RNA sequence: GGGAACGACUCGAGUAGAGUCGAAAAGCAAGGAGAAGGAGCUUAAUUGCUAAAGACUAUAUUAGAAGUCUUUCAUUGGACAUCUGAGAUUGAGUUGUCAACGACAAAUAACUCAAAAUCUUCAAUCACAUGCAUCUCCUCCGGUAUGUGAAAGCGAGAUAAAUUAAAUCUUCGGAUUUAAUUUAUCAAAAGAAACAACAACAACAAC
Reactivity to 2A3 in 0.01 (KOAc 150mM, MgCl2 10mM, bicine 150mM(pH8.5), 24C), signal-to-noise 4, nucleotides 027 to 156: g010c010a020a030g060g010a040g040a040a030g040g030a020g020c020u080u100a080a090u230u080g000c040u080a060a030a040g010a010c010u050a040u060a140u300u150a170g090a210a020g030u010c000u000u020u020c060a060u080u130g030g020a040c010a090u090c110u110g010a010g020a050u010u010g000a020g010u010u010g030u030c040a150a070c070g090a010c050a040a120a030u110a060a000c010u010c000a040a090a080a170u040c030u230u080c060a050a160u070c010a030c000a060u010g000c000a020u000c050u020c050c000u020c020c020g020g020u050a040u050g020u030g010a100a060a020g090c140g070a080
Reactivity to DMS in 0.01 (KOAc 150mM, MgCl2 10mM, bicine 150mM(pH8.5), 24C), signal-to-noise 2, nucleotides 027 to 156: g000c050a090a070g010g000a080g000a100a030g020g000a090g040c070u000u000a060a110u010u010g010c020u010a060a020a110g020a050c000u020a070u020a200u000u000a130g030a100a070g010u000c000u000u000u000c110a160u000u010g020g010a060c050a100u000c050u000g020a030g000a190u000u020g000a040g020u000u010g020u000c040a050a210c110g030a140c170a090a040a020u010a030a040c020u000c010a040a040a040a100u000c010u000u000c060a060a130u000c000a050c010a030u000g030c000a050u010c070u000c020c030u000c030c050g000g010u000a010u030g000u000g030a040a140a200g040c080g000a190